Chemical mapping of a 207-nucleotide RNA with 2A3 and DMS. Reactivities are rounded to 0.1 and cut off at 0 and 3. For DMS, 1,833 sequencing reads were counted.
[RMDB]
RNA sequence: GGGAACGACUCGAGUAGAGUCGAAAACGGGCGACCGGCUCCGAGGCGAGAUCUACAGGCCGCUGGGUGGACGGUAUCCUGGCAGUAGGAGACUGGACAUCGAGAUCAAAUUAUUGCCUGAGCAUGGAGACGCUUUCAUGGAAGGUGGUUCGGACAGCAAAUGUUGCAUCUUCGGAUGCAACAUUUGAAAAGAAACAACAACAACAAC
Reactivity to 2A3 in 0.01 (KOAc 150mM, MgCl2 10mM, bicine 150mM(pH8.5), 24C), signal-to-noise 2, nucleotides 027 to 156: c010g000g020g000c050g110a030c030c020g130g050c070u000c000c010g040a020g010g020c020g020a130g020a170u000c020u050a040c060a050g010g010c010c020g020c020u050g030g030g000u010g010g000a000c000g000g000u000a020u000c000c000u020g070g070c130a030g060u210a010g010g020a000g000a020c010u010g000g020a000c000a030u030c020g090a000g000a040u180c100a020a090a110u260u180a120u130u240g000c000c000u020g020a030g060c110a100u210g010g000a010g040a020c010g000c000u060u290u160c070a080u200g040g000a000a030g040g030u090g000g000u020u020c030g020g030a050c060a030g100
Reactivity to DMS in 0.01 (KOAc 150mM, MgCl2 10mM, bicine 150mM(pH8.5), 24C), signal-to-noise 1, nucleotides 027 to 156: c050g010g040g020c020g010a080c010c030g000g000c030u000c000c030g000a050g010g020c020g000a100g010a200u000c010u000a200c000a010g010g070c010c050g030c040u030g010g010g060u010g010g000a090c030g040g020u000a050u000c020c000u030g030g040c200a180g000u000a070g030g000a080g030a020c030u000g010g010a090c040a020u000c010g010a130g030a130u000c060a030a070a150u010u000a020u000u010g020c020c000u010g020a180g030c050a080u000g020g000a210g000a150c030g000c080u000u000u000c060a100u030g040g030a140a300g000g000u000g010g050u030u050c060g010g000a040c040a090g010